[RMDB]
RNA sequence: GGGAACGACUCGAGUAGAGUCGAAAAUGUGACUAAUAGCAGAUUGCUUGUGUUUGCCUAUUAGUCUUAAAAUCAGCAAGCUACAUUAGGUUGCAGUCAGGUCAGCCUAAAAGAGAUUUACUGACUCGCAAGAUUUGGGCUUGAGUUAUGUGUCGAGGAAGAGAGAUUAGUUCGCUAAUCUCUCUUCAAAAGAAACAACAACAACAAC
Reactivity to 2A3 in 0.01 (KOAc 150mM, MgCl2 10mM, bicine 150mM(pH8.5), 24C), signal-to-noise 2, nucleotides 027 to 156: u230g000u040g000a000c000u000a000a000u000a000g020c000a000g000a040u050u100g020c080u080u060g050u030g040u140u020u000g010c020c000u000a000u000u010a000g000u000c000u000u010a010a010a030a060u180c070a010g050c020a030a020g000c000u140a120c130a120u100u080a040g160g000u020u010g000c020a010g010u020c000a010g020g020u020c020a020g050c000c020u090a070a040a020a000g100a000g020a030u100u110u210a060c030u000g000a020c000u000c040g050c020a050a040g040a260u120u090u080g040g000g020c000u030u060g010a010g010u040u050a100u160g050u000g010u050c050g050a060g110
Reactivity to DMS in 0.01 (KOAc 150mM, MgCl2 10mM, bicine 150mM(pH8.5), 24C), signal-to-noise 2, nucleotides 027 to 156: u020g020u010g000a070c030u000a030a040u000a030g040c010a030g020a040u010u000g040c170u000u000g040u000g020u000u010u000g000c140c030u010a050u000u000a030g000u010c020u000u000a080a090a060a130u010c080a090g020c000a050a060g020c020u000a040c060a120u000u000a040g000g010u000u010g010c030a130g020u010c060a080g020g010u000c050a040g020c020c040u000a020a040a030a120g010a140g010a110u000u000u010a030c020u000g000a020c010u000c090g000c080a040a080g030a190u000u000u000g020g040g000c030u000u000g010a130g020u000u000a070u000g020u000g010u000c020g010a240g010
Conditions: 150 mM KOAc, 10 mM MgCl2 and 150 mM bicine (pH 8.5), 24 C. The record gives the reactivity of an RNA of 207 nucleotides to 2A3 and DMS. Values cover nucleotides 27 to 156.